[RMDB]
RNA sequence: GGGAACGACUCGAGUAGAGUCGAAAAGAUAUGGAAAUCUUAUGGCCGAUAAGCAGCUAUCGGAAACGAUAGAUUGCUUUUGACGGCUUAUCAUUUCCUAAGUCAAAGACUAGCUUCGGCUAGUCAAGUAAAGUCAUACGUUCGCGUAUGACUUUACAAAAGAAACAACAACAACAAC
Reactivity to 2A3 in 0.01 (KOAc 150mM, MgCl2 10mM, bicine 150mM(pH8.5), 24C), signal-to-noise 2, nucleotides 027 to 126: g000a010u020a020u040g000g020a040a000a010u040c030u060u080a170u300g040g000c020c050g260a200u110a300a000g000c000a000g000c010u000a000u000c000g000g000a040a020a010c020g000a000u010a010g070a120u090u050g000c000u010u020u030u100g250a120c100g000g000c000u020u020a010u010c000a000u000u000u020c000c000u000a030a000g000u000c060a240a080a020g000a000c000u000a000g040c000u040u070c300g130g030c000u000a000g000u000c010a000a000
Reactivity to DMS in 0.01 (KOAc 150mM, MgCl2 10mM, bicine 150mM(pH8.5), 24C), signal-to-noise 3, nucleotides 027 to 126: g000a010u000a110u010g000g000a000a010a000u000c040u000u000a020u020g030g000c010c000g030a110u010a030a020g010c010a010g000c000u000a000u000c000g000g000a030a020a060c000g000a000u010a010g020a090u000u000g020c000u000u000u000u010g010a180c150g010g000c000u000u000a000u010c070a020u000u000u000c000c000u010a030a160g000u000c020a140a090a180g010a020c000u000a000g020c010u000u030c280g040g020c000u000a000g010u000c000a010a090

Structure probing data (2A3 and DMS) for a 177-nucleotide construct. For DMS the reverse transcriptase was MarathonRT. Conditions: 150 mM KOAc, 10 mM MgCl2 and 150 mM bicine (pH 8.5), 24 C. Values cover nucleotides 27 to 126.